[RMDB]
RNA sequence: GGGAACGACUCGAGUAGAGUCGAAAAGCUGAGUACCUCUAUUCCUUAUAAGGGCAAGGUCCAAAGGUGUCAGCCCGAUCUCUUAAAACCUUAAAGGAACCAAAAUAUUUAAUCUAAAUUUGGCCAACCUACCCACGUAGUUCGCUACGUGGGUAGGAAAAGAAACAACAACAACAAC
Reactivity to 2A3 in 0.01 (KOAc 150mM, MgCl2 10mM, bicine 150mM(pH8.5), 24C), signal-to-noise 1, nucleotides 027 to 126: g030c030u070g010a000g040u070a030c010c010u070c040u090a040u090u220c000c000u090u020a120u120a300a140g000g120g000c090a030a000g000g000u020c000c040a090a130a000g010g010u040g010u000c000a030g030c040c000c000g180a190u000c000u000c000u090u170a160a120a150a200c000c000u000u180a130a140a060g100g000a100a070c020c020a000a090a000a030u300a060u180u260u180a080a150u140c080u120a150a190a130u000u000u020g000g000c020c000a070a050